[RMDB]
RNA sequence: GGGAACGACUCGAGUAGAGUCGAAAAUACACAUCUUUUCUGUGGUUUCAAUCAAUGCUCAUUAUUUUAGCGUAGCAUAGGUAUUCAGAAUGUACACCAAUAAUGAGCCAAAAGGACAGCUUCUCUGUUAGAUUUGGGAGAUUUUGUGUAGGAUUAAAUGAUGAUUAAUCUUCGGAUUAAUCAUCAUAAAAGAAACAACAACAACAAC
Reactivity to 2A3 in 0.01 (KOAc 150mM, MgCl2 10mM, bicine 150mM(pH8.5), 24C), signal-to-noise 7, nucleotides 027 to 156: u060a010c020a000c000a040u040c030u050u070u050u050c050u040g080u080g080g070u040u140u170c070a040a070u050c020a050a080u110g000c010u010c010a010u000u020a030u030u080u040u150a070g010c040g050u030a020g040c020a030u040a090g080g060u140a180u150u210c030a050g050a190a030u040g010u030a020c020a010c050c020a000a000u010a010a000u010g000a000g000c030c010a050a070a020a030g090g010a010c000a020g030c050u150u050c090u040c020u040g070u050u050a060g010a160u040u100u130g050g020g000a030g010a040u000u040u080u050g020u000g000u010a030g020g050a020u070u140a080a160
Reactivity to DMS in 0.01 (KOAc 150mM, MgCl2 10mM, bicine 150mM(pH8.5), 24C), signal-to-noise 4, nucleotides 027 to 156: u000a060c040a080c040a060u000c010u000u000u010u000c030u000g030u010g040g010u000u000u010c050a080a090u000c060a080a110u000g050c000u000c010a030u010u000a040u000u000u010u010a040g030c050g040u000a120g040c040a050u010a110g030g030u000a110u000u000c160a180g020a140a070u000g010u000a060c030a040c020c110a040a050u000a020a020u000g010a030g030c030c100a030a050a090a110g010g000a050c030a060g020c110u020u000c060u010c030u010g030u000u000a110g010a160u000u000u010g030g010g010a090g010a090u000u000u000u010g020u010g020u000a070g010g020a170u010u000a050a140
This 207-nucleotide RNA was probed chemically with 2A3 and DMS.
For DMS, 8,060 sequencing reads were counted.
Conditions: 150 mM KOAc, 10 mM MgCl2 and 150 mM bicine (pH 8.5), 24 C.